[RMDB]
RNA sequence: GGGAACGACUCGAGUAGAGUCGAAAAGAUAUGGAGGAUAGUUCGACAGGAUUGUUAGGGAAGUCGGAAACGACGCCUAACUCGAUUCGAACUUUCCUCCUAAGUCAAACAGGUCUUCGGACCUGAAGUUAGAAAUGUAGUUCGCUACAUUUCUAACAAAAGAAACAACAACAACAAC
Reactivity to 2A3 in 0.01 (KOAc 150mM, MgCl2 10mM, bicine 150mM(pH8.5), 24C), signal-to-noise 8, nucleotides 027 to 126: g020a010u030a020u120g000g000a000g010g000a010u000a030g000u000u010c010g020a010c070a090g220g240a300u240u180g040u010u010a010g030g050g220a300a090g040u010c010g000g020a030a020a010c000g010a000c030g300c070c000u000a010a000c000u010c030g120a220u140u050c000g000a000a000c000u000u000u000c000c000u000c000c000u000a000a000g000u000c000a010a020a070c000a010g000g000u000c000u050u140c300g110g000a020c000c000u010g000a050a010
Reactivity to DMS in 0.01 (KOAc 150mM, MgCl2 10mM, bicine 150mM(pH8.5), 24C), signal-to-noise 7, nucleotides 027 to 126: g000a030u000a300u010g000g010a030g010g010a010u000a010g010u000u000c000g020a030c300a160g000g000a120u010u010g010u000u000a000g010g000g010a080a110g010u000c000g000g000a050a070a120c000g010a010c000g000c000c000u000a010a010c000u000c060g000a280u000u000c000g000a010a010c010u000u000u000c000c000u000c000c000u000a010a050g000u000c020a100a110a250c010a010g010g010u000c000u000u010c190g020g000a010c000c000u000g000a020a060
Overview: Chemical mapping of a 177-nucleotide RNA with 2A3 and DMS. For DMS, 10,310 sequencing reads were counted. For DMS the reverse transcriptase was MarathonRT. For 2A3 the reverse transcriptase was SuperScript II with manganese. Values are in units of 0.01, from 0 to 300, in steps of 10. It was measured as part of the RMDB library TTRDEL. The RNA was probed in 150 mM KOAc, 10 mM MgCl2 and 150 mM bicine (pH 8.5) at 24 C.